[RMDB]
RNA sequence: GGGAACGACUCGAGUAGAGUCGAAAAUAGAAGAGAGUAAUAGCAAUCGUCGUAUUCUUUUCACUGUAUGUGACGAUUGGUGAACGCUACAUACAGAUGAGACGGUAGCGUUCACUCACCGUCUCAAGAUAGUAUUGGGAUUCGUCUCGAUGCUAUCAAAAGAAACAACAACAACAAC
Reactivity to 2A3 in 0.01 (KOAc 150mM, MgCl2 10mM, bicine 150mM(pH8.5), 24C), signal-to-noise 9, nucleotides 027 to 126: u150a020g090a100a010g040a010g010a010g040u100a020a120u060a090g040c030a020a060u050c020g050u020c010g000u010a020u020u030c020u020u080u040u060c080a080c080u100g020u100a040u050g030u030g010a000c000g010a020u010u040g010g010u020g010a000a000c000g010c000u010a000c000a070u200a050c080a040g300a280u160g020a060g020a050c050g030g000u000a000g000c000g000u000u000c000a000c000u000c000a030c010c020g050u000c000u000c010a000a020
Reactivity to DMS in 0.01 (KOAc 150mM, MgCl2 10mM, bicine 150mM(pH8.5), 24C), signal-to-noise 9, nucleotides 027 to 126: u040a080g010a050a040g000a030g000a050g010u010a040a050u040a080g020c050a100a060u010c080g010u010c030g010u000a020u000u000c010u000u010u000u020c080a140c170u010g010u010a060u010g010u010g010a000c000g000a030u000u010g000g020u000g010a020a020c010g010c010u000a000c010a080u030a190c170a110g010a130u020g000a090g000a110c150g000g010u000a000g000c010g000u000u000c010a010c010u000c160a040c110c040g000u000c000u000c020a060a130
Chemical mapping of a 177-nucleotide RNA with 2A3 and DMS. DMS (dimethyl sulfate) methylates the pairing face of unpaired adenines and cytosines. The reactions ran in a buffer of 150 mM KOAc, 10 mM MgCl2 and 150 mM bicine (pH 8.5), at 24 C.